[RMDB]
Chemical mapping of a 177-nucleotide RNA with 2A3 and DMS. For DMS the reverse transcriptase was MarathonRT. 2A3 adducts were read by reverse transcription with SuperScript II with manganese. For DMS, 1,025 sequencing reads were counted. The data come from the RNA Mapping Database (RMDB), library RFMREP.
RNA sequence: GGGAACGACUCGAGUAGAGUCGAAAAUAGAAUGAUUUUAUCGCAUCAUAUCCUUUUUUAUGUAAUUAGUUGAUAAAAUCUAUCUGUACUUAUAUUUAACGACUGAAAUCGGUCACUUACUGAAAAAGAGAUAAAGAAUGUUCGCAUUCUUUAUCUCAAAAGAAACAACAACAACAAC
Reactivity to 2A3 in 0.01 (KOAc 150mM, MgCl2 10mM, bicine 150mM(pH8.5), 24C), signal-to-noise 2, nucleotides 027 to 126: u140a000g000a010a090u030g000a000u010u010u000u020a010u000c010g000c000a030u020c000a010u020a110u130c000c030u150u210u050u030u020u080a030u040g020u010a000a280u100u100a180g010u080u160g000a000u010a000a000a000a000u020c000u000a060u000c010u020g030u010a070c030u170u180a120u050a110u280u160u070a140a040c010g020a010c010u010g050a090a160a140u070c010g020g000u030c000a000c040u060u290a070c070u050g040a050a070a000a070a000
Reactivity to DMS in 0.01 (KOAc 150mM, MgCl2 10mM, bicine 150mM(pH8.5), 24C), signal-to-noise 1, nucleotides 027 to 126: u000a040g000a020a300u000g010a010u000u000u000u000a000u000c010g040c040a110u000c000a020u010a040u020c170c060u000u000u010u020u000u010a020u000g010u010a100a110u000u010a160g020u010u000g020a020u000a000a010a010a000u000c010u000a150u000c000u010g010u040a110c070u000u000a120u000a060u030u010u000a050a190c060g010a020c020u000g000a030a070a120u010c010g050g000u000c070a040c090u000u030a170c070u000g000a090a040a040a130a120